Structure probing data (2A3) for a 177-nucleotide construct. As a SHAPE reagent, 2A3 marks flexible, mostly unpaired nucleotides at the ribose 2'-OH. Values cover nucleotides 27 to 126. It was measured as part of the RMDB library OK1LIB. Values are in units of 0.01, from 0 to 300, in steps of 10.
[RMDB]
RNA sequence: GGGAACGACUCGAGUAGAGUCGAAAACUGCUGGCCUGUCAUCCCCAACUUUUGCUUCGGGGUGUCGUAGCUGGGUUAUCGUAGCUAUAGGUUAAAACGGAAAAUGCUUCUGCUUGGAAAAUUACACACCUGAUCCAGGGUUCGCCCUGGAUCAGGUAAAAGAAACAACAACAACAAC
Reactivity to 2A3 in 0.01 (KOAc 150mM, MgCl2 10mM, bicine 150mM(pH8.5), 24C), signal-to-noise 1, nucleotides 027 to 126: c000u000g150c000u030g000g000c000c050u100g020u030c030a000u000c000c000c020c000a000a000c000u180u300u090u300g000c070u000u030c000g000g000g030g000u000g050u030c020g000u020a020g000c000u000g020g020g020u110u070a180u130c020g000u080a000g000c000u000a000u150a260g120g100u070u130a000a300a000a000c130g300g000a050a080a000a000u080g000c020u060u060c000u000g050c080u000u100g020g030a080a000a190a190u190u120a110c030a000c020